[RMDB]
The record gives the reactivity of an RNA of 177 nucleotides to 2A3 and DMS. Conditions: 150 mM KOAc, 10 mM MgCl2 and 150 mM bicine (pH 8.5), 24 C. 2A3 adducts were read by reverse transcription with SuperScript II with manganese. The 2A3 profile rests on 11,375 reads. Source: RMDB library OK2TST, as collected in RNAgym.
RNA sequence: GGGAACGACUCGAGUAGAGUCGAAAAGUACAGGCUGGAGCGCCUCCUCAGACUCUCGUUCAGCGAGGGGGCCGAUGGCUACCGCCUGAGCAUCCUCGUGUACGACACGAAGGGAGGUACGGCCAUCUCACUUAAAGAACUUCGGUUCUUUAAGUGAAAAAGAAACAACAACAACAAC
Reactivity to 2A3 in 0.01 (KOAc 150mM, MgCl2 10mM, bicine 150mM(pH8.5), 24C), signal-to-noise 5, nucleotides 027 to 126: g070u080a070c080a080g000g010c010u070g060g080a130g130c070g010c020c000u010c000c010u270c040a060g020a220c020u010c010u000c080g030u070u060c040a060g060c050g020a000g000g000g000g000g010c000c010g010a010u040g010g000c000u030a120c010c070g000c000c000u050g020a030g030c000a040u020c000c000u000c000g010u020g000u030a060c050g010a010c010a000c080g020a030a040g000g000g010a000g020g000u050a010c010g000g000c010c000a080u030c030
Reactivity to DMS in 0.01 (KOAc 150mM, MgCl2 10mM, bicine 150mM(pH8.5), 24C), signal-to-noise 8, nucleotides 027 to 126: g010u010a120c160a100g010g010c020u000g010g010a300g020c140g010c010c000u000c010c000u000c030a180g000a250c210u000c110u000c050g010u000u000c080a070g030c040g000a010g010g010g000g000g010c020c040g010a050u010g010g020c010u010a070c280c230g000c010c010u010g010a210g010c040a070u000c010c000u000c000g020u000g000u000a040c070g010a060c160a030c020g010a190a100g010g000g000a040g010g010u010a070c060g020g010c000c010a110u000c090